[RMDB]
RNA sequence: GGGAACGACUCGAGUAGAGUCGAAAAGAGCGAAAGCGAAAAUCGGAGAAGGGAAGGAGGAGCAUGAGGAACUCUUUUUCCGCUGAACUCAUGCAAGGCGGCCCGAAUCCGGGAAGAAAGAAAGAAACCGAUAUCAUAAGUUCGCUUAUGAUAUCGGAAAAGAAACAACAACAACAAC
Reactivity to DMS in 0.01 (KOAc 150mM, MgCl2 10mM, bicine 150mM(pH8.5), 24C), signal-to-noise 7, nucleotides 027 to 126: g010a140g000c050g000a080a090a160g020c040g020a070a060a080a110u040c020g000g000a020g000a190a220g000g000g000a080a040g020g010a060g000g020a300g000c020a030u010g000a010g000g010a100a120c090u000c030u010u010u000u030u030c040c050g040c100u010g000a180a170c010u030c070a010u010g020c010a050a180g010g000c030g010g000c010c000c000g000a130a150u000c030c010g000g000g000a090a070g000a070a070a050g010a070a070a090g020a100a100a070
Reactivity to 2A3 in 0.01 (KOAc 150mM, MgCl2 10mM, bicine 150mM(pH8.5), 24C), signal-to-noise 6, nucleotides 027 to 126: g080a020g020c080g060a110a070a000g040c070g080a060a060a010a080u100c010g020g010a020g040a190a080g030g010g020a040a080g070g070a080g030g040a010g010c010a020u040g010a030g030g060a090a090c020u020c000u060u060u010u090u040c030c020g020c070u030g020a050a020c010u000c030a020u070g010c000a020a040g100g000c070g040g010c000c000c000g010a030a020u000c020c000g010g020g010a040a010g050a020a070a030g140a020a070a010g060a070a040a000
Description:
The record gives the reactivity of an RNA of 177 nucleotides to DMS and 2A3. For 2A3 the reverse transcriptase was SuperScript II with manganese. For 2A3, 7,325 sequencing reads were counted. DMS adducts were read by reverse transcription with MarathonRT. Source: RMDB library OK1LIB, as collected in RNAgym. Conditions: 150 mM KOAc, 10 mM MgCl2 and 150 mM bicine (pH 8.5), 24 C.